[RMDB]
RNA sequence: GGGAACGACUCGAGUAGAGUCGAAAAGUCGCCUGGUGAAGUCGAGCUAGACCCUGAGUCGUCUUCCGCUGGACUGAGAGCAGCGGUGACUGCAACAUCGCCCAACGAACCAUGUCCUGGCGUAUGCCUCCAACGAGUCGUUCGCGACUCGUUGGAGAAAAGAAACAACAACAACAAC
Reactivity to 2A3 in 0.01 (KOAc 150mM, MgCl2 10mM, bicine 150mM(pH8.5), 24C), signal-to-noise 1, nucleotides 027 to 126: g070u010c000g000c030c010u070g040g070u160g140a090a030g030u040c060g000a070g080c040u030a020g030a090c040c000c000u040g040a010g070u050c000g000u000c050u110u050c020c000g000c000u000g050g010a090c070u050g070a090g000a020g240c060a020g000c010g050g070u030g020a060c050u080g000c000a060a040c000a070u090c010g010c000c010c000a000a070c040g040a040a040c000c020a040u150g000u020c000c020u030g010g000c010g010u050a060u210g000c030
Reactivity to DMS in 0.01 (KOAc 150mM, MgCl2 10mM, bicine 150mM(pH8.5), 24C), signal-to-noise 1, nucleotides 027 to 126: g000u000c040g000c060c000u010g010g040u000g050a150a050g040u000c020g010a050g050c020u000a090g000a070c020c000c060u020g000a020g020u000c080g000u010c090u000u000c030c030g020c050u000g000g000a090c010u010g000a130g010a170g020c050a050g020c060g000g000u010g000a060c030u000g000c100a060a100c040a070u000c050g000c000c010c060a150a060c090g000a140a100c090c040a030u000g010u000c030c010u010g000g040c030g000u000a080u000g040c070

Chemical mapping of a 177-nucleotide RNA with 2A3 and DMS.
The DMS profile rests on 1,005 reads.
For 2A3, 1,148 sequencing reads were counted.
High DMS reactivity at an A or C suggests that its Watson-Crick edge is free.